[RMDB]
Annotation:
Structure probing data (DMS and 2A3) for a 177-nucleotide construct. The RNA was probed in 150 mM KOAc, 10 mM MgCl2 and 150 mM bicine (pH 8.5) at 24 C. 2A3 is a SHAPE reagent: it acylates the 2'-hydroxyl of flexible nucleotides of all four kinds. For 2A3, 5,725 sequencing reads were counted. For DMS, 4,504 sequencing reads were counted. Reactivities are given for positions 27 through 126. It was measured as part of the RMDB library M2PK50.
RNA sequence: GGGAACGACUCGAGUAGAGUCGAAAACUUCGGUAGUUCGCUACCGAAGAAAAGACAGACUACGCAACUGUCAAAAACACAACAAAAGUGUAAAAGCGUAGUAAAGUUCCCACUUCGGUGGGAACAAUCAAGCAAUAGAGUUCGCUCUAUUGCUUGAAAAAGAAACAACAACAACAAC
Reactivity to DMS in 0.01 (KOAc 150mM, MgCl2 10mM, bicine 150mM(pH8.5), 24C), signal-to-noise 4, nucleotides 027 to 126: c000u000u000c000g010g020u000a000g010u000u010c240g020c000u000a010c000c000g000a000a000g000a070a040a070a150g000a020c000a000g000a050c010u000a000c010g000c000a130a030c020u000g000u000c010a030a090a090a130a050c020a020c010a100a090c210a080a100a150a110g010u000g000u000a070a080a050a070g010c000g020u010a000g010u020a060a110a130g010u000u000c000c000c000a010c010u000u010c130g020g000u000g000g000g010a000a010c000a020a070
Reactivity to 2A3 in 0.01 (KOAc 150mM, MgCl2 10mM, bicine 150mM(pH8.5), 24C), signal-to-noise 3, nucleotides 027 to 126: c010u010u000c000g000g000u020a020g020u050u060c220g010c120u000a010c000c000g000a000a000g010a000a040a000a000g010a000c020a000g010a030c010u010a000c020g000c030a160a080c080u000g000u010c010a000a020a020a040a000c040a030c040a160a040c040a030a140a070a080g020u020g010u100a050a130a020a000g020c000g000u000a000g000u020a030a010a020g000u010u010c000c000c000a000c000u040u070c210g110g000u010g000g000g000a000a000c000a000a020